[RMDB]
RNA sequence: GGGAACGACUCGAGUAGAGUCGAAAAAAAGGAGGUGAUGGUUUUGAGUUACCUUUUCGAGCUCUUACUUAGUGUCCUGGCAAAUGUAUUGGCCUAUUUCAUUUGCAAAUGGCUAGACGCUAAGGACCCGAUAUAACGCAUUCGUGCGUUAUAUCGGAAAAGAAACAACAACAACAAC
Reactivity to DMS in 0.01 (KOAc 150mM, MgCl2 10mM, bicine 150mM(pH8.5), 24C), signal-to-noise 2, nucleotides 027 to 126: a080a060a050g000g000a030g000g020u000g000a010u020g010g000u000u000u000u010g020a210g010u010u010a030c030c030u000u000u010u000c060g000a060g010c000u010c020u000u000a130c000u010u000a030g010u010g010u000c010c040u000g000g000c010a000a020a040u000g000u010a060u010u010g020g020c110c040u020a110u030u000u020c000a060u010u010u000g000c040a060a080a060u030g030g010c050u000a050g000a030c020g010c020u000a010a010g000g000a100c100
Reactivity to 2A3 in 0.01 (KOAc 150mM, MgCl2 10mM, bicine 150mM(pH8.5), 24C), signal-to-noise 3, nucleotides 027 to 126: a000a000a000g120g000a010g000g030u050g020a040u050g070g160u100u120u200u160g170a130g000u010u040a010c000c000u000u010u010u050c080g000a050g030c000u010c010u080u120a110c000u000u010a000g000u000g010u030c010c050u040g010g000c020a050a020a010u060g020u050a160u060u150g070g050c000c000u050a120u020u060u050c000a040u020u020u050g040c010a100a050a230u120g030g000c000u020a040g010a020c000g010c040u030a050a030g010g030a020c000